An RNA of 177 nucleotides, treated with 2A3 and DMS and read out base by base. It was measured as part of the RMDB library TTRDES. DMS adducts were read by reverse transcription with MarathonRT. For DMS, 7,883 sequencing reads were counted. The RNA was probed in 150 mM KOAc, 10 mM MgCl2 and 150 mM bicine (pH 8.5) at 24 C.
RNA sequence: GGGAACGACUCGAGUAGAGUCGAAAAGAUAUGGACGGUGGUAGGGAGCUAGGACAUCGGAAACGAUGUUUAGCGAGGAUCUACGCCGUCCUAAGUCAAAACCCGGGGUAGUUCGCUACCCCGGGAAGAAUAAUCAAUAGUUCGCUAUUGAUUAUUCAAAAGAAACAACAACAACAAC
Reactivity to 2A3 in 0.01 (KOAc 150mM, MgCl2 10mM, bicine 150mM(pH8.5), 24C), signal-to-noise 3, nucleotides 027 to 126: g010a010u030a010u090g010g000a000c010g000g080u300g150g080u030a020g000g050g040a100g000c020u030a030g090g170a000c010a010u000c000g000g010a040a060a000c010g000a000u010g000u030u020u000a010g020c010g050a300g060g040a060u030c000u010a000c010g000c000c000g000u010c000c000u000a010a000g000u000c000a010a020a050a080c000c000c010g000g020g010g000u010a010g030u070u170c300g030c120u000a010c000c000c020c000g000g030g000a000a000
Reactivity to DMS in 0.01 (KOAc 150mM, MgCl2 10mM, bicine 150mM(pH8.5), 24C), signal-to-noise 4, nucleotides 027 to 126: g000a030u000a300u010g000g000a010c000g010g020u000g020g060u000a010g000g010g000a140g020c000u000a020g020g010a010c000a000u000c000g010g000a100a070a150c000g010a010u000g010u000u000u000a010g000c000g020a160g010g010a070u010c000u000a010c010g010c000c010g020u000c000c000u000a000a060g010u010c030a140a120a170a200c000c000c010g000g010g010g010u000a010g010u010u020c270g020c020u000a010c000c000c000c000g000g010g010a000a010